RNA sequence: GGGAACGACUCGAGUAGAGUCGAAAAUCCUAAGUCCUUGGGAGUACGCGAAGAACUACUUUGUCAGAGAUCGGAAACGAUCUCUUGGAUUUAAGUAGGGAGUGAAACCAAGGAUAUGGAAUGCUAUAAUGAGAAGUUUCGACUUCUCAUUAUAGAACUCUCCUGCUGUGUUCGCACAGCAGGAGAGAAAAGAAACAACAACAACAAC
Reactivity to 2A3 in 0.01 (KOAc 150mM, MgCl2 10mM, bicine 150mM(pH8.5), 24C), signal-to-noise 1, nucleotides 027 to 156: u010c020c000u010a090a000g050u010c000c010u030u000g020g060g000a030g010u020a050c220g020c000g170a250a030g010a030a000c000u000a000c000u010u000u030g040u000c020a000g020a000g010a010u000c000g000g090a180a050a010c030g010a000u020c000u000c050u000u040g010g020a000u300u000u060a000a000g000u000a000g000g020g000a010g000u070g040a030a010a010c000c000a020a000g000g020a000u000a000u030g000g040a070a050u110g000c010u000a010u000a010a000u000g000a000g000a010a000g010u070u080u300c290g050a050c000u000u020c000u010c000a000u000u000a000u000a000g000a000a000